[RMDB]
RNA sequence: GGGAACGACUCGAGUAGAGUCGAAAAGAUAUGGACACCGUAGGGAGCCUGUGGUCGGAAACGACCACCAGGCGUUGAUCUACGUGUCCUAAGUCAAAAGGCUUUGAACGUUCGCGUUCAAAGCCAAGCUGCAUAAUAAGUUCGCUUAUUAUGCAGCAAAAGAAACAACAACAACAAC
Reactivity to DMS in 0.01 (KOAc 150mM, MgCl2 10mM, bicine 150mM(pH8.5), 24C), signal-to-noise 8, nucleotides 027 to 126: g000a010u000a010u010g000g000a010c000a000c300c300g010u010a010g020g000g000a000g030c000c000u000g030u000g010g000u000c000g010g010a000a000a020c010g020a010c000c010a000c300c200a000g000g010c000g020u010u010g000a030u010c000u000a010c010g020u010g010u000c000c000u010a000a030g000u000c010a030a080a070a160g000g000c000u000u000u000g000a010a000c000g000u000u020c300g000c010g010u000u000c000a000a000a000g020c000c010a000a020
Reactivity to 2A3 in 0.01 (KOAc 150mM, MgCl2 10mM, bicine 150mM(pH8.5), 24C), signal-to-noise 3, nucleotides 027 to 126: g010a010u010a000u040g000g000a000c020a000c050c300g000u000a000g000g000g020a010g000c010c000u000g000u010g000g000u010c000g010g000a000a000a000c000g000a000c010c000a010c030c040a000g010g010c010g010u050u010g000a000u000c000u000a000c000g000u000g000u000c000c000u000a000a000g000u000c000a040a050a030a180g010g000c010u000u000u000g010a000a010c000g020u100u120c300g010c010g210u000u000c030a000a000a000g000c000c000a000a010
The data come from the RNA Mapping Database (RMDB), library TTRDES. Chemical mapping of a 177-nucleotide RNA with DMS and 2A3. Values are in units of 0.01, from 0 to 300, in steps of 10. For 2A3 the reverse transcriptase was SuperScript II with manganese. For DMS the reverse transcriptase was MarathonRT. For 2A3, 26,435 sequencing reads were counted.